Record summary:
Chemical mapping of a 177-nucleotide RNA with 2A3. Reactivities are given for positions 27 through 126. For 2A3 the reverse transcriptase was SuperScript II with manganese. The reactions ran in a buffer of 150 mM KOAc, 10 mM MgCl2 and 150 mM bicine (pH 8.5), at 24 C. The data come from the RNA Mapping Database (RMDB), library OK1LIB.
RNA sequence: GGGAACGACUCGAGUAGAGUCGAAAAAGCGUGCGUCGGUACGUGUCGACUACUACGCGUGAAACUGUGGCUCCUUUCAUACGGUUUGCUGUCCAUCAGUUCCGGCGCGACCGCGAGCCCACCUGCGGAGGUCACGUGAGUUCGCUCACGUGACCUCAAAAGAAACAACAACAACAAC
Reactivity to 2A3 in 0.01 (KOAc 150mM, MgCl2 10mM, bicine 150mM(pH8.5), 24C), signal-to-noise 3, nucleotides 027 to 126: a000g090c050g010u090g000c000g030u010c050g000g000u110a000c000g020u030g010u030c050g000a020c000u160a100c040u050a010c120g010c000g000u000g060a060a150a000c040u090g050u090g100g020c010u080c000c000u020u140u070c120a140u120a110c100g080g060u060u090u050g110c060u070g040u150c070c020a130u110c000a070g020u020u020c020c020g020g000c030g000c040g050a110c060c040g000c000g000a000g020c020c000c000a070c030c030u130g040c100g090